[RMDB]
The record gives the reactivity of an RNA of 177 nucleotides to 2A3 and DMS. For 2A3 the reverse transcriptase was SuperScript II with manganese. The reactions ran in a buffer of 150 mM KOAc, 10 mM MgCl2 and 150 mM bicine (pH 8.5), at 24 C.
RNA sequence: GGGAACGACUCGAGUAGAGUCGAAAAUUGUGUGUCAUUGAGAUCCCCGGCCAGGCGCAUUAACCGAUCUGCACGUAUGGCUUCGUCCUACGUCGCGAUUUGGACGCCAGAACCAUGUUUGUUCAAACUGCUAUUUUCUGUUCGCAGAAAAUAGCAGAAAAGAAACAACAACAACAAC
Reactivity to 2A3 in 0.01 (KOAc 150mM, MgCl2 10mM, bicine 150mM(pH8.5), 24C), signal-to-noise 1, nucleotides 027 to 126: u080u000g010u000g000u000g000u120c080a140u000u220g010a020g030a070u020c050c150c000c000g010g000c000c010a010g000g070c000g010c050a050u020u180a090a020c050c000g020a000u020c130u240g000c000a000c010g030u000a050u220g000g000c050u070u300c060g090u000c000c000u000a000c010g000u010c040g000c000g000a040u000u000u190g040g000a030c030g000c030c000a000g030a020a020c020c020a020u130g060u020u010u050g030u050u000c020a030a080a110
Reactivity to DMS in 0.01 (KOAc 150mM, MgCl2 10mM, bicine 150mM(pH8.5), 24C), signal-to-noise 2, nucleotides 027 to 126: u010u010g030u010g010u010g020u010c010a120u010u000g010a110g000a080u030c010c000c010c160g030g000c060c060a200g000g000c040g010c120a110u000u010a060a180c050c030g010a000u000c020u020g090c030a020c000g000u000a010u050g000g000c000u030u040c260g020u000c000c000u010a020c000g000u000c120g030c010g010a010u000u000u030g020g000a200c060g020c000c020a070g030a080a070c020c030a080u070g010u020u010u040g000u000u010c040a090a120a130